[RMDB]
RNA sequence: GGGAACGACUCGAGUAGAGUCGAAAAGGGAACCGGUUCGCCGGUUCCCAAAUAAAAGCGGAGUCAACGCUAACCCGCAAAGACUCCGCAGCGGGAAAGGGAAAAGGUCUUGCUUCGGCAAGACCAACUCAAUAGGCAUCUUCGGAUGCCUAUUGAGAAAAGAAACAACAACAACAAC
Reactivity to DMS in 0.01 (KOAc 150mM, MgCl2 10mM, bicine 150mM(pH8.5), 24C), signal-to-noise 2, nucleotides 027 to 126: g020g000g000a010a010c000c000g030g040u000u030c300g030c000c020g030g000u010u000c000c000c000a010a020a010u010a050a070a180a110g010c010g000g000a010g010u000c000a120a220c240g000c010u010a110a130c120c060c090g010c040a100a180a190g000a010c000u000c000c000g060c010a010g010c180g000g010g000a050a030a050g000g010g000a150a040a120a050g000g000u000c000u000u000g010c000u000u000c190g000g010c000a000a010g010a000c000c000a010a010